The record gives the reactivity of an RNA of 177 nucleotides to DMS and 2A3.
[RMDB]
RNA sequence: GGGAACGACUCGAGUAGAGUCGAAAAUCAUUGAUAUUCCUUUCAAUCUAUUAAAUUUUAUUUUUCCUAUUUUCCAGAGUCCAAGGUGUAUUGCCACUUUCAAGCUACUUCGACGGGGUAAAACCCGUUAUGAUCCUAAAUUCGUUUAGGAUCAUAAAAAAGAAACAACAACAACAAC
Reactivity to DMS in 0.01 (KOAc 150mM, MgCl2 10mM, bicine 150mM(pH8.5), 24C), signal-to-noise 6, nucleotides 027 to 126: u020c100a080u010u010g010a080u010a060u010u010c040c020u000u010u010c020a050a080u010c050u010a090u010u020a060a060a090u010u010u010u020a080u030u020u010u000u000c010c010u010a100u010u000u000u000c030c020a090g000a110g000u010c050c040a050a070g010g010u010g010u000a070u010u010g010c040c020a060c040u000u000u020c080a070a110g010c050u010a050c070u000u010c110g010a040c010g010g000g010g000u000a070a060a100a210c000c000c000g010
Reactivity to 2A3 in 0.01 (KOAc 150mM, MgCl2 10mM, bicine 150mM(pH8.5), 24C), signal-to-noise 9, nucleotides 027 to 126: u080c010a020u030u110g040a030u040a080u120u070c020c000u060u120u050c020a040a070u020c030u180a150u110u210a250a120a140u100u140u090u100a150u070u070u020u070u070c010c010u060a150u070u070u070u050c020c010a030g010a020g090u000c020c020a050a040g040g000u030g020u050a120u050u160g040c020c010a020c010u030u090u050c020a050a030g010c010u050a050c020u090u060c020g020a010c010g000g010g000g000u000a010a020a040a060c000c000c000g000